[RMDB]
Description: This 207-nucleotide RNA was probed chemically with 2A3 and DMS. Values cover nucleotides 27 to 156. The reactions ran in a buffer of 150 mM KOAc, 10 mM MgCl2 and 150 mM bicine (pH 8.5), at 24 C. Reactivities are rounded to 0.1 and cut off at 0 and 3. Source: RMDB library ARCHII, as collected in RNAgym. The DMS profile rests on 2,625 reads. For 2A3 the reverse transcriptase was SuperScript II with manganese.
RNA sequence: GGGAACGACUCGAGUAGAGUCGAAAAGCAAAAUACAACUGCCAAUAACAAGCAGUCGUCCUUUGUUCUCGCUGCCUAAGCGAGCGCACUAACAGGACCGUCGACCCGGUGAUGCUCUCUAUCCGGUAAGUCGGCGUCAGAAAAGGGAGCUCGCUGCCUAAACGAAAGUGUUCGCACUUUCGUUUAGAAAAGAAACAACAACAACAAC
Reactivity to 2A3 in 0.01 (KOAc 150mM, MgCl2 10mM, bicine 150mM(pH8.5), 24C), signal-to-noise 4, nucleotides 027 to 156: g030c020a050a040a070a030u160a140c070a070a010c040u020g010c030c050a140a090u190a230a120c140a100a040g010c010a000g010u040c020g010u000c030c000u080u050u070g010u030u020c010u010c000g020c030u060g030c020c150u120a070a000g010c010g010a000g010c000g010c010a060c000u130a180a040c010a110g020g030a010c020c010g010u010c000g000a000c000c000c000g000g000u010g010a020u100g000c000u000c000u010c010u050a020u000c000c010g020g000u080a150a060g020u010c000g020g000c000g020u050c020a010g100a010a130a010a000g010g000g010a020g000c030u060c050g070c020u060g000c010
Reactivity to DMS in 0.01 (KOAc 150mM, MgCl2 10mM, bicine 150mM(pH8.5), 24C), signal-to-noise 2, nucleotides 027 to 156: g000c070a070a020a040a120u030a100c090a060a020c020u000g000c020c050a130a150u000a170a220c170a110a090g000c010a040g010u000c010g000u000c080c070u000u010u000g010u000u000c000u010c040g000c000u010g040c070c030u020a070a070g020c020g000a020g000c050g040c040a100c190u010a040a140c130a090g020g010a050c020c050g070u050c020g000a050c030c000c030g000g070u000g000a120u000g020c060u020c050u000c030u020a280u000c040c000g010g000u010a060a200g050u000c000g050g020c000g050u000c050a140g000a040a030a080a130g030g000g000a100g000c020u000c020g010c050u010g010c120